[RMDB]
RNA sequence: GGGAACGACUCGAGUAGAGUCGAAAAGGGCGCUAGUUCGCUAGCGCCCAAACAACACUACACUCUACAGUAGUGAUAAUAAAUAAUCUGAAGAGUACAUAAAAAGACUCUCGUUCGCGAGAGUCAACCCCUAGUUAUUGUUCGCAAUAACUAGGGGAAAAGAAACAACAACAACAAC
Reactivity to 2A3 in 0.01 (KOAc 150mM, MgCl2 10mM, bicine 150mM(pH8.5), 24C), signal-to-noise 2, nucleotides 027 to 126: g000g000g000c000g000c000u000a010g000u030u100c150g020c130u000a000g040c020g000c010c000c010a020a000a000c000a010a010c000a010c000u090a020c040a030c080u080c010u090a080c040a050g030u020a020g020u020g020a010u080a170a030u060a010a140a010u150a040a100u050c020u030g080a080a000g030a030g060u140a090c050a140u230a080a100a040a030a060g000a010c000u010c010u000c010g010u040u030c220g020c010g050a000g000a000g000u010c000a000a000
Reactivity to DMS in 0.01 (KOAc 150mM, MgCl2 10mM, bicine 150mM(pH8.5), 24C), signal-to-noise 1, nucleotides 027 to 126: g060g030g010c020g040c000u000a000g000u000u010c210g010c050u010a010g030c010g000c000c000c000a030a040a050c020a020a150c060a040c050u000a090c070a090c060u000c040u000a050c030a040g000u000a030g020u000g000a110u000a060a120u010a060a040a060u010a070a130u020c110u010g000a110a020g000a040g000u010a140c180a070u020a020a110a110a060a110g000a020c000u000c000u000c000g010u010u020c120g020c010g010a020g000a040g010u000c020a060a050
Notes
The data come from the RNA Mapping Database (RMDB), library M2PK50. The record gives the reactivity of an RNA of 177 nucleotides to 2A3 and DMS. In probing experiments dimethyl sulfate is read out at A N1 and C N3, which are open when not base-paired. For DMS the reverse transcriptase was MarathonRT. For 2A3, 1,504 sequencing reads were counted. For DMS, 1,149 sequencing reads were counted.